Overview
Chemical mapping of a 177-nucleotide RNA with 2A3 and DMS. The reactions ran in a buffer of 150 mM KOAc, 10 mM MgCl2 and 150 mM bicine (pH 8.5), at 24 C.

[RMDB]
RNA sequence: GGGAACGACUCGAGUAGAGUCGAAAACAAUCGAUUUCGUGAUGGAUGCGCUUUCCAACGGCCGGCGCGUGAAGUGCCUGACCGUCGUCGACGAUUUCACGAAAGAGGCUGUCGACAUCGUCGUCGACUGCCACCGCACUUUCGAGUGCGGUGGCAGAAAAGAAACAACAACAACAAC
Reactivity to 2A3 in 0.01 (KOAc 150mM, MgCl2 10mM, bicine 150mM(pH8.5), 24C), signal-to-noise 2, nucleotides 027 to 126: c040a040a060u180c020g100a080u050u030u050c000g000u000g010a030u030g060g050a080u150g140c040g000c150u150u140u000c060c070a010a020c010g040g000c010c010g000g000c000g000c010g040u050g210a180a080g020u000g000c000c000u130g150a300c010c000g030u030c080g090u080c000g040a020c030g010a020u020u040u020c020a000c020g070a030a030a010g040a000g030g020c040u030g020u010c000g000a000c010a050u150c140g160u050c050g010u000c010g030a020
Reactivity to DMS in 0.01 (KOAc 150mM, MgCl2 10mM, bicine 150mM(pH8.5), 24C), signal-to-noise 1, nucleotides 027 to 126: c050a060a080u000c100g000a190u000u000u000c000g040u000g000a050u000g010g000a110u020g020c000g020c170u000u000u010c080c080a090a040c010g030g010c010c110g000g000c000g040c000g040u000g020a110a160g000u000g000c010c000u010g000a020c010c000g020u000c040g000u000c060g030a110c040g000a190u010u010u000c020a020c000g000a010a010a040g000a200g000g000c130u000g000u000c010g010a050c010a050u000c300g010u010c190g000u000c010g000a100
DMS adducts were read by reverse transcription with MarathonRT. Source: RMDB library OK2TRN, as collected in RNAgym.